[RMDB]
RNA sequence: GGGAACGACUCGAGUAGAGUCGAAAAUAGGGUAAUAUUUAAGUUUUUAUCGAAAUUGGGACACUUGCGAAAGUCAAAGAAGGUACUGUUAAUAAUUAUAGAGUGGGCUAGGCGUGGUGGCUCAUGCCCGUUCUUAAAGAUUCGUCUUUAAGAACGGAAAAGAAACAACAACAACAAC
Reactivity to DMS in 0.01 (KOAc 150mM, MgCl2 10mM, bicine 150mM(pH8.5), 24C), signal-to-noise 4, nucleotides 027 to 126: u010a090g010g010g010u000a060a050u000a050u010u010u010a080a140g000u010u000u010u000u000a050u020c040g000a030a080a090u000u000g010g000g000a060c060a040c030u000u010g020c040g010a050a070a070g010u000c050a070a080a120g000a110a110g000g000u000a040c060u010g000u000u000a060a120u010a060a060u010u000a110u000a080g000a110g020u000g000g000g010c050u010a070g010g030c020g010u000g010g030u000g010g010c020u000c050a030u000g000c150
Reactivity to 2A3 in 0.01 (KOAc 150mM, MgCl2 10mM, bicine 150mM(pH8.5), 24C), signal-to-noise 3, nucleotides 027 to 126: u070a010g070g010g040u080a070a050u090a150u120u230u090a130a060g020u050u060u030u030u110a090u050c010g030a060a100a100u100u040g010g000g010a010c010a000c060u060u130g000c010g030a070a050a020g010u010c030a050a080a110g050a050a040g070g000u060a040c010u010g020u090u020a100a060u090a140a040u210u150a080u120a130g080a020g090u120g000g030g020c000u020a020g020g010c010g010u010g000g020u010g020g010c010u000c010a000u060g000c000